[RMDB]
Source: RMDB libraries RFM100 and RFMREP, as collected in RNAgym. Structure probing data (DMS and 2A3) for a 177-nucleotide construct.

RNA sequence: GGGAACGACUCGAGUAGAGUCGAAAAGCCUUGGGAGUGAUCCCGGGUCGAACAGCCUCUAGUGCAGAUCUUGGUGGUAGUAGCAAAUACUCAAAUGAGAACUUUGAGGACUGAAGUGGGGAAAGGUAUCAGACAGAUAAUUCGUUAUCUGUCUGAUAAAAGAAACAACAACAACAAC
Reactivity to DMS in 0.01 (KOAc 150mM, MgCl2 10mM, bicine 150mM(pH8.5), 24C), signal-to-noise 9, nucleotides 027 to 126: g000c010c000u000u030g050g000g000a030g010u040g010a140u000c010c010c010g010g010g010u010c050g010a100a120c120a100g020c020c010u000c050u010a050g020u020g010c080a070g000a080u010c040u010u010g010g020u020g010g020u010a040g010u010a070g020c130a060a060a090u020a100c020u000c020a030a040a040u010g000a160g000a110a160c130u000u010u000g000a020g000g000a130c080u010g000a060a050g010u010g000g010g000g000a040a050a040g010g020u010
Reactivity to 2A3 in 0.01 (KOAc 150mM, MgCl2 10mM, bicine 150mM(pH8.5), 24C), signal-to-noise 9, nucleotides 027 to 126: g020c020c000u100u150g030g000g010a040g020u130g030a060u020c000c010c000g000g010g000u040c030g030a080a040c020a030g030c020c000u010c040u060a060g030u070g110c060a020g030a190u040c010u050u090g060g000u020g030g020u060a030g010u020a010g050c060a040a120a060u080a080c010u010c020a030a050a100u170g020a060g020a060a020c020u060u040u050g020a020g000g030a020c040u050g030a080a040g030u060g020g020g000g010a050a080a030g070g000u020
DMS adducts were read by reverse transcription with MarathonRT. The RNA was probed in 150 mM KOAc, 10 mM MgCl2 and 150 mM bicine (pH 8.5) at 24 C.